[RMDB]
RNA sequence: GGGAACGACUCGAGUAGAGUCGAAAAGCUAGAGCGUUGUCGUAUUAGGCCGGGCUGCGAAGCGGUCGGAUAUGCGACGUCAGUUUGAUCCUGACCGGCCUAAGGAUCUUACUGGUGCUCUAGGAAAGGGUAGUUCGGGCUUCGGUCCGGAUUGCCCAAAAGAAACAACAACAACAAC
Reactivity to 2A3 in 0.01 (KOAc 150mM, MgCl2 10mM, bicine 150mM(pH8.5), 24C), signal-to-noise 9, nucleotides 027 to 126: g070c000u000a000g000a000g000c020g050u080u150g020u060c010g010u020a060u060u070a080g090g060c000c010g020g020g010c010u040g020c090g130a150a030g030c030g030g040u070c020g010g020a060u060a020u130g020c000g000a000c000g040u090c000a000g000u000u010u020g000a000u010c000c000u010g010a040c020c010g010g000c000c000u000a010a010g000g000a000u000c000u010u010a010c000u010g020g030u090g000c000u000c000u000a000g000g010a050a080a030
Reactivity to DMS in 0.01 (KOAc 150mM, MgCl2 10mM, bicine 150mM(pH8.5), 24C), signal-to-noise 9, nucleotides 027 to 126: g010c010u000a000g000a010g010c010g020u040u020g010u000c020g020u010a040u020u000a040g010g020c000c000g000g010g010c010u010g000c150g010a130a090g020c030g010g020u010c040g010g010a150u020a030u010g010c010g000a010c000g010u030c010a010g020u000u000u010g000a020u000c030c000u000g000a140c040c010g000g000c000c000u010a100a020g000g000a010u000c010u000u010a020c030u000g000g020u040g010c000u000c010u000a010g000g010a050a080a110